[RMDB]
RNA sequence: GGGAACGACUCGAGUAGAGUCGAAAAUGACGUUAAACUGCUGACUCAUACAUACUGACACCGGUUGCUCAAAAGGCUGUGUGGGACAAUAGAAUAACAAGGCUGUCAAUUUGAGCUUGACGGCUGCAAAACCUGCAGUACUUCGGUACUGCAGGAACCAUCUAAGGUCGUUCGCGACCUUAGAUGGAAAAGAAACAACAACAACAAC
Reactivity to 2A3 in 0.01 (KOAc 150mM, MgCl2 10mM, bicine 150mM(pH8.5), 24C), signal-to-noise 3, nucleotides 027 to 156: u120g040a030c120g020u010u060a060a070a030c040u040g010c010u020g050a050c000u000c030a030u030a040c000a020u090a060c040u150g090a060c040a070c100c030g130g010u090u070g000c040u020c100a080a050a000a000g050g000c050u010g000u000g010u020g020g020g020a010c010a000a120u100a070g070a050a020u070a060a050c050a080a010g030g000c000u010g000u000c000a000a010u030u050u240g030a030g050c020u000u010g000a010c030g020g000c010u000g030c050a020a010a030a170c000c000u000g000c000a000g000u000a000c010u010u060c100g090g000u000a000c000u010g000c010a000g000g000a000a000